RNA sequence: GGGAACGACUCGAGUAGAGUCGAAAAAUGCGACCACUGUGCCGAGGUGUGAAAAUGGACCACGGCACGUUCUCUCAGCAGUGAACUUGUGACUGAAGUACCAUUGUCACGAAGCGAUAUCAAGUGGGGCCGUCCGUGUGGUCAUGAUUACCCUCGACUACACUCCUCUGUUCGCAGAGGAGUGUAGAAAAGAAACAACAACAACAAC
Reactivity to DMS in 0.01 (KOAc 150mM, MgCl2 10mM, bicine 150mM(pH8.5), 24C), signal-to-noise 2, nucleotides 027 to 156: a110u000g010c000g000a220c030c000a080c050u000g030u000g040c000c020g030a070g000g050u000g000u020g020a050a090a130a080u000g000g000a060c020c000a080c070g020g030c080a030c020g010u000u020c010u020c010u000c030a120g000c070a120g010u020g000a060a040c010u000u000g000u000g030a070c020u010g000a080a160g040u010a180c110c100a030u050u000g010u020c040a040c020g010a020a080g040c050g000a280u000a100u000c060a080a170g030u000g030g000g000g070c170c040g040u000c030c020g020u000g000u010g000g020u000c000a130u000g000a180u010u000a100c050c000c010u010c010g020a280
Reactivity to 2A3 in 0.01 (KOAc 150mM, MgCl2 10mM, bicine 150mM(pH8.5), 24C), signal-to-noise 4, nucleotides 027 to 156: a000u160g040c060g090a040c010c040a070c070u140g060u110g110c040c010g010a040g010g030u180g010u070g160a060a010a000a040u090g040g040a040c020c000a020c000g000g000c050a010c010g010u020u000c020u000c000u000c030a070g010c010a050g130u030g140a140a080c020u080u080g020u010g020a020c010u070g080a170a030g120u120a110c050c010a130u100u090g010u000c000a010c030g090a060a030g000c000g050a050u040a040u250c040a140a070g030u060g010g000g000g000c010c000g020u040c010c020g030u050g060u100g070g040u030c000a010u010g050a030u020u040a020c000c000c000u030c000g020a010